[RMDB]
RNA sequence: GGGAACGACUCGAGUAGAGUCGAAAAUGGAUGUUGCUAUGACUAAAUUCGGAACAGUAGCUCAAACCAGAAAGAAACGUUUUGUUGAAUUUAUAGCUCUUGGUGUAGCGUCAGUUGCACUUGUUGAAGCUACAGUUGCUAUUGGAUUGGCAGUUGCGGUUUUUAUCCCUUUCGAGGGAUAAAAACCAAAAGAAACAACAACAACAAC
Reactivity to 2A3 in 0.01 (KOAc 150mM, MgCl2 10mM, bicine 150mM(pH8.5), 24C), signal-to-noise 2, nucleotides 027 to 156: u030g010g040a040u060g000u150u090g020c000u020a010u050g080a090c060u140a110a180a300u260u140c050g010g000a080a050c000a110g070u020a010g030c000u080c050a070a160a100c000c070a010g130a080a070a000g080a030a060a000c100g000u020u020u040u040g000u010u010g020a070a050u160u160u040a040u060a040g010c010u010c020u000u050g020g000u000g050u000a000g020c010g110u180c120a070g010u010u000g000c000a000c000u000u020g070u080u010g080a030a000g000c000u000a000c000a020g030u040u010g010c010u020a060u070u150g090g110a120u100u100g030g080c000a000g000u000u010g040c040
About this RNA: This 207-nucleotide RNA was probed chemically with 2A3. For 2A3 the reverse transcriptase was SuperScript II with manganese. For 2A3, 581 sequencing reads were counted. It was measured as part of the RMDB library OK3TST.